[RMDB]
Notes:
Chemical mapping of a 207-nucleotide RNA with 2A3 and DMS. For DMS, 4,256 sequencing reads were counted. The RNA was probed in 150 mM KOAc, 10 mM MgCl2 and 150 mM bicine (pH 8.5) at 24 C. Source: RMDB library OK3TST, as collected in RNAgym.
RNA sequence: GGGAACGACUCGAGUAGAGUCGAAAACACUGACACCGAGCGUUUUGCGUCGCGAAUGCCUCUCGCCGUUGCAUGGAUUUAGUGUCGUGAUGGAUUCCGCGCUGCACAUCUGCCUGGAGGCCGUAGUGGCCGCUUCUUCGUUACGCAGCAGGCGUUCGUCUGUUCAGAAAUUCGUUUCUGAACAGACAAAAGAAACAACAACAACAAC
Reactivity to 2A3 in 0.01 (KOAc 150mM, MgCl2 10mM, bicine 150mM(pH8.5), 24C), signal-to-noise 3, nucleotides 027 to 156: c050a000c050u140g070a020c010a030c080c060g070a020g030c050g000u030u030u170u040g010c000g030u060c030g010c010g020a050a040u070g090c020c010u050c000u030c030g000c050c020g110u110u120g060c060a090u110g060g060a090u050u100u130a110g000u030g010u050c020g000u040g060a160u100g120g000a050u200u070c070c000g000c030g010c010u070g000c010a020c000a070u040c030u060g030c030c000u030g060g000a040g010g050c050c020g080u150a060g070u100g060g020c000c000g010c010u080u040c020u070u060c040g050u030u010a010c020g010c010a040g020c000a030g140g000c020g000u040u050c010
Reactivity to DMS in 0.01 (KOAc 150mM, MgCl2 10mM, bicine 150mM(pH8.5), 24C), signal-to-noise 1, nucleotides 027 to 156: c080a060c020u020g010a080c080a100c020c020g000a070g000c050g000u000u000u000u000g010c070g040u020c070g020c020g000a080a070u000g010c060c040u010c020u000c050g040c040c050g030u000u000g000c040a150u000g030g000a100u000u000u000a070g000u000g030u000c030g040u000g020a130u020g010g000a160u000u000c020c070g020c070g020c000u000g000c030a110c060a060u000c060u020g050c020c070u000g000g000a110g040g040c020c020g090u000a190g010u010g040g030c000c020g050c040u000u000c060u000u000c060g030u000u000a070c030g030c020a110g030c070a140g020g000c050g020u010u000c080